Structure probing data (2A3 and DMS) for a 177-nucleotide construct. DMS adducts were read by reverse transcription with MarathonRT. The 2A3 profile rests on 8,201 reads. The data come from the RNA Mapping Database (RMDB), library OK2TST.
RNA sequence: GGGAACGACUCGAGUAGAGUCGAAAACAACUCGGGGAUCGCAGAUCGCUCGUCAUUGCCAGGUCACCGGUGGGCCGUGUGGAUGGCAUUCACCCAAGACCCGGGCGUGACCACCCGGCCAACUGCGUACGCUCACAAUAUUCGUAUUGUGAGCGUAAAAAGAAACAACAACAACAAC
Reactivity to 2A3 in 0.01 (KOAc 150mM, MgCl2 10mM, bicine 150mM(pH8.5), 24C), signal-to-noise 5, nucleotides 027 to 126: c030a030a080c030u020c040g020g030g000g030a050u050c020g000c030a010g060a200u060c020g010c080u080c040g040u020c000a010u010u140g030c000c000a000g000g010u010c010a000c050c020g010g000u020g000g020g000c010c040g090u130g090u160g230g280a170u140g050g020c000a000u140u180c000a010c010c000c010a030a060g010a010c000c020c000g020g010g010c020g000u000g000a000c000c000a030c020c020c000g000g000c030c030a040a050c020u020g000c010g030
Reactivity to DMS in 0.01 (KOAc 150mM, MgCl2 10mM, bicine 150mM(pH8.5), 24C), signal-to-noise 6, nucleotides 027 to 126: c150a090a120c040u000c040g010g000g010g030a170u010c020g010c040a020g020a140u010c220g010c030u010c230g010u000c020a030u010u010g010c000c000a300g000g000u000c010a050c270c300g000g010u000g010g010g010c010c010g030u000g010u010g000g000a050u000g000g000c030a100u000u010c010a040c000c000c050a120a270g000a030c020c010c080g000g000g010c030g000u000g010a030c010c100a130c100c120c070g000g000c050c090a100a090c010u000g000c030g020